[RMDB]
RNA sequence: GGGAACGACUCGAGUAGAGUCGAAAAGCAAUAAAACCACAUGGAGGAGAUAUCCCACUUGAUAAUCUAUUUAUCUGGGCUCGAUUUCUGGCAGGGAGGCCAAAGAGAAAUUCUAACUUCAUUGUCUGUACCAAUCUACAUUCGUGUAGAUUGGUACAAAAGAAACAACAACAACAAC
Reactivity to DMS in 0.01 (KOAc 150mM, MgCl2 10mM, bicine 150mM(pH8.5), 24C), signal-to-noise 2, nucleotides 027 to 126: g000c100a050a020u080a050a140a150a140c020c030a070c080a070u020g010g000a080g010g010a090g000a090u010a080u060c000c040c040a090c270u050u000g000a030u000a010a010u010c220u030a040u020u000u000a050u010c020u000g000g000g020c080u000c070g000a140u000u000u070c120u000g000g000c000a080g000g010g010a030g000g020c110c080a010a030a030g000a020g040a030a030a070u000u000c040u050a110a100c060u000u010c050a020u010u010g000u000c070u000
Reactivity to 2A3 in 0.01 (KOAc 150mM, MgCl2 10mM, bicine 150mM(pH8.5), 24C), signal-to-noise 8, nucleotides 027 to 126: g040c030a030a070u130a190a090a020a040c020c010a050c020a050u050g040g010a020g010g030a040g010a040u040a070u110c010c000c000a040c060u060u070g010a020u030a080a050u050c130u210a190u110u120u010a050u020c030u020g000g040g000c020u020c060g060a060u020u120u030c050u050g010g000c020a040g030g100g070a030g080g090c030c030a040a070a010g090a010g020a020a100a030u140u020c020u050a050a150c010u030u010c030a070u060u160g050u020c040u030

An RNA of 177 nucleotides, treated with DMS and 2A3 and read out base by base.
The RNA was probed in 150 mM KOAc, 10 mM MgCl2 and 150 mM bicine (pH 8.5) at 24 C.
Source: RMDB libraries RFM100 and RFMREP, as collected in RNAgym.